[RMDB]
RNA sequence: GGGAACGACUCGAGUAGAGUCGAAAAGAUAUGGAGCGAACUACAGCCUAAGAGCGAAGAACUCGGAAACGAGGGAGCUCGAUGGCUGCGCUCCUAAGUCAAAGCUUGGAGGUUCGCCUCCAAGCAAGCAAGAGUUAAUGUUCGCAUUAACUCUUGCAAAAGAAACAACAACAACAAC
Reactivity to 2A3 in 0.01 (KOAc 150mM, MgCl2 10mM, bicine 150mM(pH8.5), 24C), signal-to-noise 2, nucleotides 027 to 126: g020a020u080a050u200g000g000a020g010c000g010a050a040c110u170a070c300a000g010c010c010u120a190a030g000a000g000c010g160a300a020g000a060a030c000u000c000g020g020a050a060a030c010g000a010g030g000g020a020g040c010u010c000g020a030u110g000g000c000u000g000c000g000c000u000c010c010u010a100a010g010u000c020a040a080a030g000c000u010u000g020g010a000g040g000u080u210c290g100c120c000u000c010c000a000a000g010c000a000a010
Reactivity to DMS in 0.01 (KOAc 150mM, MgCl2 10mM, bicine 150mM(pH8.5), 24C), signal-to-noise 3, nucleotides 027 to 126: g010a040u000a300u000g000g000a020g000c000g000a070a060c090u020a300c000a020g000c000c000u000a190a290g010a000g020c010g000a100a120g010a120a200c010u000c000g000g010a110a120a200c020g020a030g000g000g000a080g020c000u000c000g000a190u020g000g020c000u000g000c010g000c000u000c010c000u000a000a090g000u010c030a110a100a100g010c000u000u000g000g000a010g010g000u000u000c200g020c000c010u000c000c000a000a000g010c000a010a040
Conditions: 150 mM KOAc, 10 mM MgCl2 and 150 mM bicine (pH 8.5), 24 C. Chemical mapping of a 177-nucleotide RNA with 2A3 and DMS. The DMS profile rests on 2,329 reads. Values are in units of 0.01, from 0 to 300, in steps of 10. For DMS the reverse transcriptase was MarathonRT. High 2A3 reactivity points to a flexible backbone, as in loops and unpaired stretches. Source: RMDB library TTRDEL, as collected in RNAgym. 2A3 adducts were read by reverse transcription with SuperScript II with manganese.